This 207-nucleotide RNA was probed chemically with 2A3. For 2A3 the reverse transcriptase was SuperScript II with manganese. It was measured as part of the RMDB library OK3TST.
RNA sequence: GGGAACGACUCGAGUAGAGUCGAAAAUGAUCCUUUUCCAGAUUAUUUACAAACUUGGUAUUUUUUGGUUCUGGAGGAGGCGAAUUUAAAUUCGGACUUGGAUUCGGAUUUUGUGAGUUCUUGAUCUUAUUAUACAGCGCAUAUAGGAUGGCGACGGCAGUGUGGUAAUCUUCGGAUUACCACACUGAAAAGAAACAACAACAACAAC
Reactivity to 2A3 in 0.01 (KOAc 150mM, MgCl2 10mM, bicine 150mM(pH8.5), 24C), signal-to-noise 1, nucleotides 027 to 156: u070g020a010u030c000c000u060u000u020u060c000c000a050g010a000u030u270a060u120u300u180a090c130a130a190a050c000u050u090g160g040u070a100u080u190u050u020u190u170g030g000u090u070c000u000g010g000a000g000g050a010g010g000c010g000a010a000u050u080u160a180a000a000u070u010c000g010g000a030c030u020u130g060g000a040u170u010c010g010g090a060u120u120u090u010g100u030g120a230g040u060u030c050u040u050g060a060u000c000u050u070a030u170u070a150u090a150c150a040g000c010g000c030a030u010a010u070a150g090g000a030u060g010g000c010g000a010c000g070g010